Structure probing data (2A3 and DMS) for a 170-nucleotide construct. For DMS, 18,962 sequencing reads were counted. The RNA was probed in 150 mM KOAc, 10 mM MgCl2 and 150 mM bicine (pH 8.5) at 24 C. For 2A3 the reverse transcriptase was SuperScript II with manganese.
RNA sequence: GGGAACGACUCGAGUAGAGUCGAAAAGCAUGGCGGUGGUAUCGCUGGUGCUAUUAAUGCGGCUUCAAAAGGGGCUGUCCAAAAAGAGUCAGAUGAGUAUAUUCUGGCUAAAGGGCCGUUACAAGUAUAGGUGACUGGUUCGCCAGUCACAAAAGAAACAACAACAACAAC
Reactivity to 2A3 in 0.01 (KOAc 150mM, MgCl2 10mM, bicine 150mM(pH8.5), 24C), signal-to-noise 5, nucleotides 027 to 129: g030c010a020u020g010g000c020g000g000u080g120g180u190a060u200c000g000c030u050g050g050u000g020c020u030a060u050u160a070a020u150g010c010g000g000c000u050u040c130a040a070a070a080g020g000g000g020c060u060g040u090c000c000a020a030a030a000a000g090a000g000u000c000a000g010a050u030g000a000g180u060a050u010a020u180u000c010u010g000g000c020u040a080a010a030g020g000g010c010c020g010u030u020a060c050a080a020g090u060a170u050a110g130
Reactivity to DMS in 0.01 (KOAc 150mM, MgCl2 10mM, bicine 150mM(pH8.5), 24C), signal-to-noise 4, nucleotides 027 to 129: g000c040a040u020g030g000c000g020g050u000g000g030u070a030u030c030g030c000u030g090g070u020g030c020u000a080u030u030a060a060u040g020c020g000g000c020u040u030c070a070a070a130a130g000g000g000g000c030u070g000u000c030c030a040a050a050a120a040g010a060g010u050c000a000g030a050u060g000a200g030u000a130u060a070u070u000c010u030g010g020c010u000a010a090a090g000g030g020c000c000g040u050u000a010c190a070a130g030u050a070u080a080g030